[RMDB]
RNA sequence: GGGAACGACUCGAGUAGAGUCGAAAAUCAAGGCUGGUUUAGUCGGUGUGCUCACACUAGACAACCAGGACCUUAAUGGCAAGUGGUAUGAUUUUGGUGACUUCGUAAUCACUCAACCUGGUUCAGGACGCAACGGCCUUCGGGCCGUUGAAAAGAAACAACAACAACAAC
Reactivity to 2A3 in 0.01 (KOAc 150mM, MgCl2 10mM, bicine 150mM(pH8.5), 24C), signal-to-noise 3, nucleotides 027 to 129: u150c020a030a000g050g000c010u000g000g060u040u060u170a050g000u000c000g000g000u010g010u000g030c120u170c100a000c030a020c000u050a160g000a000c000a000a010c020c010a000g000g030a010c000c000u000u000a100a010u040g050g000c050a040a060g040u000g030g010u020a060u090g030a050u040u060u150u050g070g000u080g040a030c040u010u000c020g020u030a070a030u010c020a040c050u000c030a010a170c020c000u090g010g010u040u050c020a000g000g060a040c070g020
Reactivity to DMS in 0.01 (KOAc 150mM, MgCl2 10mM, bicine 150mM(pH8.5), 24C), signal-to-noise 5, nucleotides 027 to 129: u050c130a180a070g000g000c000u000g020g030u010u040u020a090g070u000c020g030g020u000g000u000g030c300u040c120a070c000a050c030u070a120g030a030c080a040a000c020c000a010g020g010a170c050c000u030u010a000a110u090g020g030c140a080a020g030u000g000g020u040a060u030g000a110u000u000u000u000g050g000u040g000a120c080u040u040c120g020u070a010a010u080c020a020c070u020c140a070a120c090c030u020g010g000u040u020c140a060g010g010a100c170g080